[RMDB]
RNA sequence: GGGAACGACUCGAGUAGAGUCGAAAACCAACCGCCUUCGGGCGGUUGGGAUGACAGUCGCGAGGAAAGUCCGGGCUGACUGUCCACGACAGAAGCCGGCUUAAAUCUAUCGCUUCGGCGAUAGAAAAUGUAUUGGGAAAUUCGUUUCCCAAUACAUAAAAGAAACAACAACAACAAC
Reactivity to DMS in 0.01 (KOAc 150mM, MgCl2 10mM, bicine 150mM(pH8.5), 24C), signal-to-noise 4, nucleotides 027 to 126: c000c000a000a010c010c000g020c000c000u000u010c190g050g010g030c000g000g010u000u000g000g010g010a060u010g010a060c050a050g000u000c020g020c050g010a150g020g010a100a070a050g010u010c010c010g010g000g010c010u010g000a050c020u000g010u000c010c100a110c170g010a040c080a060g000a300a090g010c010c010g000g000c030u000u000a060a120a130u010c010u000a000u000c000g010c000u000u020c200g030g020c000g000a010u000a010g000a020a040a090
Reactivity to 2A3 in 0.01 (KOAc 150mM, MgCl2 10mM, bicine 150mM(pH8.5), 24C), signal-to-noise 3, nucleotides 027 to 126: c000c000a000a000c010c010g060c010c030u070u070c250g130g010g000c020g020g010u000u010g000g000g010a040u110g030a010c030a020g070u030c020g040c050g090a060g010g140a240a050a020g070u060c020c040g030g050g040c030u040g020a190c010u010g000u000c010c030a140c130g100a030c010a040g070a050a010g030c010c020g000g000c020u060u120a100a160a100u020c000u000a000u000c000g000c000u050u030c200g100g000c000g010a000u000a000g000a050a030a000

Chemical mapping of a 177-nucleotide RNA with DMS and 2A3. The 2A3 profile rests on 3,488 reads. The reactions ran in a buffer of 150 mM KOAc, 10 mM MgCl2 and 150 mM bicine (pH 8.5), at 24 C. Source: RMDB library M2PK50, as collected in RNAgym. For 2A3 the reverse transcriptase was SuperScript II with manganese. Values cover nucleotides 27 to 126.